[RMDB]
RNA sequence: GGGAACGACUCGAGUAGAGUCGAAAAGAAGGUAUGAACGUUGGAAGGCGCUUCCGUGUGAGCGGAAUUCUUUCAUACCAAGAACGGGAUAGGAGUUGGCGGACGGAUGUGGCCGAACCGGAAGAAAGGGUAAUACAUUCUUCGGAAUGUAUUACCCAAAAGAAACAACAACAACAAC
Reactivity to DMS in 0.01 (KOAc 150mM, MgCl2 10mM, bicine 150mM(pH8.5), 24C), signal-to-noise 3, nucleotides 027 to 126: g020a140a090g000g010u000a010u000g000a040a050c250g040u000u000g000g030a070a110g000g000c080g030c150u000u000c010c040g020u000g000u060g020a130g020c010g000g000a030a060u030u000c040u000u010u000c000a010u000a010c020c030a090a080g020a160a110c090g000g000g000a060u020a120g000g010a090g000u010u000g010g020c070g000g000a120c080g000g000a040u010g010u010g000g000c020c030g010a060a050c020c050g000g000a030a090g010a060a110a130
Reactivity to 2A3 in 0.01 (KOAc 150mM, MgCl2 10mM, bicine 150mM(pH8.5), 24C), signal-to-noise 3, nucleotides 027 to 126: g110a060a000g010g020u010a010u010g020a070a020c070g040u120u150g050g050a130a020g150g000c020g010c070u080u010c010c040g150u110g060u080g040a030g020c010g010g040a020a010u020u020c000u010u040u020c020a020u020a020c000c010a020a000g050a040a030c040g000g000g040a050u060a090g020g000a020g110u050u040g060g000c020g050g030a000c000g000g020a050u050g000u070g110g000c020c000g000a080a090c050c000g020g000a050a020g110a100a050a020
Description
This 177-nucleotide RNA was probed chemically with DMS and 2A3. The RNA was probed in 150 mM KOAc, 10 mM MgCl2 and 150 mM bicine (pH 8.5) at 24 C. The data come from the RNA Mapping Database (RMDB), library OK1LIB. The 2A3 profile rests on 1,470 reads. DMS adducts were read by reverse transcription with MarathonRT.